[RMDB]
RNA sequence: GGGAACGACUCGAGUAGAGUCGAAAAAGCCAACCGCCAGAACCUAUUGUCCAUGAGUAUGUGAACCCCUGUCAACCGUCCCCCUGUGGCCCGAACUCAAAUUGUCGCGAGGUUAAUGAACAGGCAACACUGCGUCAUAUUUCGAUAUGACGCAGUGAAAAGAAACAACAACAACAAC
Reactivity to DMS in 0.01 (KOAc 150mM, MgCl2 10mM, bicine 150mM(pH8.5), 24C), signal-to-noise 2, nucleotides 027 to 126: a090g060c040c040a090a070c060c030g030c040c030a100g010a090a110c080c030u000a070u010u020g000u000c040c020a040u000g000a130g000u010a030u000g010u000g000a030a100c020c060c000c010u010g010u010c060a060a070c020c040g010u010c020c010c000c030c030u000g020u000g000g010c010c020c010g000a060a090c040u010c090a050a080a140u000u000g010u000c030g020c090g000a090g040g000u000u000a060a080u030g010a070a110c070a060g000g000c040a080a100